[RMDB]
RNA sequence: GGGAACGACUCGAGUAGAGUCGAAAAUAAGCAAAAGACAACCACCUUUCACGCUGACAAUAGCGUUAUCCCUCUGCACUUCGGUAAUAUGAGGGCACAGUAAAUCCCGCAAGGAUGAGAAUGUGAUUAAACAGUUACAGCUUCGGCUGUAACUGAACUGUGGAAAAUGGUUCGCCAUUUUCCACAGAAAAGAAACAACAACAACAAC
Reactivity to DMS in 0.01 (KOAc 150mM, MgCl2 10mM, bicine 150mM(pH8.5), 24C), signal-to-noise 1, nucleotides 027 to 156: u000a050a070g020c070a070a020a060a060g000a200c040a120a150c050c040a130c080c000u000u020u000c040a090c010g040c000u020g000a300c070a100a060u000a060g020c010g000u000u000a100u010c000c000c000u020c020u000g090c050a110c060u000u020c120g070g010u000a070a140u000a070u000g000a020g030g030g090c030a070c020a080g070u000a020a080a080u000c010c000c010g000c180a080a180g080g000a120u020g000a060g020a140a120u000g020u000g000a160u000u000a180a040a150c000a020g010u000u000a000c010a000g020c000u010u000c300g030g070c010u000g010u000a010a000c000u000g010a010a060
Reactivity to 2A3 in 0.01 (KOAc 150mM, MgCl2 10mM, bicine 150mM(pH8.5), 24C), signal-to-noise 4, nucleotides 027 to 156: u110a010a010g110c040a030a040a020a040g090a060c030a050a100c030c030a060c020c030u060u200u150c100a020c010g010c030u050g100a120c130a210a120u140a110g000c000g030u070u100a070u050c010c020c000u000c000u020g010c030a030c040u070u070c150g080g000u050a040a020u100a050u300g010a010g010g000g010c000a000c000a010g000u010a000a040a030u020c030c000c000g110c060a020a040g000g000a010u000g000a000g020a060a000u010g020u010g000a010u080u220a100a050a010c000a000g000u000u000a000c000a000g010c000u030u060c150g100g000c000u000g000u000a000a000c000u000g000a020a010
Structure probing data (DMS and 2A3) for a 207-nucleotide construct. For 2A3 the reverse transcriptase was SuperScript II with manganese. DMS adducts were read by reverse transcription with MarathonRT. For 2A3, 2,066 sequencing reads were counted. Reactivities are given for positions 27 through 156.